[RMDB]
RNA sequence: GGGAACGACUCGAGUAGAGUCGAAAAAGAGCUGCUGGAGGCACACCUUACAUUGGUACACUUGAAGAUUUGGAUACACUGAAAAAAGGAGUAGCGCAAUGUGAUGGCGUUAUUCACACGGCUUUCACGUCAUAGCCCAUUUCGAUGGGCUAUGACGAAAAGAAACAACAACAACAAC
Reactivity to DMS in 0.01 (KOAc 150mM, MgCl2 10mM, bicine 150mM(pH8.5), 24C), signal-to-noise 1, nucleotides 027 to 126: a100g010a050g030c010u020g010c130u000g000g000a060g000g000c120a050c050a060c020c010u000u000a050c110a080u000u000g000g020u010a040c060a090c050u000u000g000a140a040g030a110u000u010u020g000g000a090u010a110c120a130c040u000g010a010a030a080a070a080a070g000g010a050g000u000a010g040c050g030c010a030a080u000g030u000g000a060u010g020g000c010g000u000u000a060u000u000c060a050c100a170c090g010g010c060u000u000u000c090a130
Reactivity to 2A3 in 0.01 (KOAc 150mM, MgCl2 10mM, bicine 150mM(pH8.5), 24C), signal-to-noise 1, nucleotides 027 to 126: a000g090a010g000c050u050g010c000u010g050g000a060g090g000c010a040c020a070c030c020u040u030a020c030a100u010u060g000g020u070a030c050a010c060u000u030g080a080a050g040a100u080u060u060g050g000a050u090a110c110a040c170u050g050a000a000a000a000a100a050g040g050a080g020u000a010g020c040g020c080a070a140u090g030u020g100a070u140g050g090c020g050u010u010a070u030u000c010a010c000a000c090g020g000c000u000u000u120c070a020

Chemical mapping of a 177-nucleotide RNA with DMS and 2A3. The RNA was probed in 150 mM KOAc, 10 mM MgCl2 and 150 mM bicine (pH 8.5) at 24 C. It was measured as part of the RMDB library OK2TST. Values are in units of 0.01, from 0 to 300, in steps of 10.